[RMDB]
Chemical mapping of a 177-nucleotide RNA with 2A3 and DMS. The DMS profile rests on 2,667 reads. It was measured as part of the RMDB library OK2TRN. As a SHAPE reagent, 2A3 marks flexible, mostly unpaired nucleotides at the ribose 2'-OH. The reactions ran in a buffer of 150 mM KOAc, 10 mM MgCl2 and 150 mM bicine (pH 8.5), at 24 C.
RNA sequence: GGGAACGACUCGAGUAGAGUCGAAAAAACUGUGUUCAGUCUUAAAGUACGAGUGACCGUUCACGUUUAGUCAUAAUGUACAAUGAAAGGCUUCCAGCUUACUAAGGCGUGUACGCGUGGCCGCUACGAGAGGUAUCAGUUUCGACUGAUACCUCUCAAAAGAAACAACAACAACAAC
Reactivity to 2A3 in 0.01 (KOAc 150mM, MgCl2 10mM, bicine 150mM(pH8.5), 24C), signal-to-noise 2, nucleotides 027 to 126: a000a000c070u080g000u030g000u120u060c030a050g000u030c010u080u090a110a090a060g020u060a040c020g050a000g150u020g070a040c030c000g050u040u190c100a040c110g060u020u190u110a020g000u000c000a040u050a230a030u210g050u050a020c070a050a130u160g120a070a050a010g020g000c000u250u030c060c010a010g000c010u070u000a060c030u070a090a020g000g000c080g040u060g020u050a040c040g000c060g050u050g030g010c070c010g000c000u030a070c080
Reactivity to DMS in 0.01 (KOAc 150mM, MgCl2 10mM, bicine 150mM(pH8.5), 24C), signal-to-noise 3, nucleotides 027 to 126: a040a060c020u010g020u000g010u000u000c080a090g020u000c020u000u000a050a110a140g000u010a020c090g000a300g010u000g010a020c020c030g020u010u000c150a070c130g000u010u010u000a070g000u000c020a020u000a110a140u010g030u000a020c110a070a100u000g000a100a070a040g020g000c030u000u000c060c060a030g010c030u000u010a200c070u010a060a060g000g010c020g040u000g020u000a070c070g030c130g010u000g000g000c040c020g000c110u010a050c210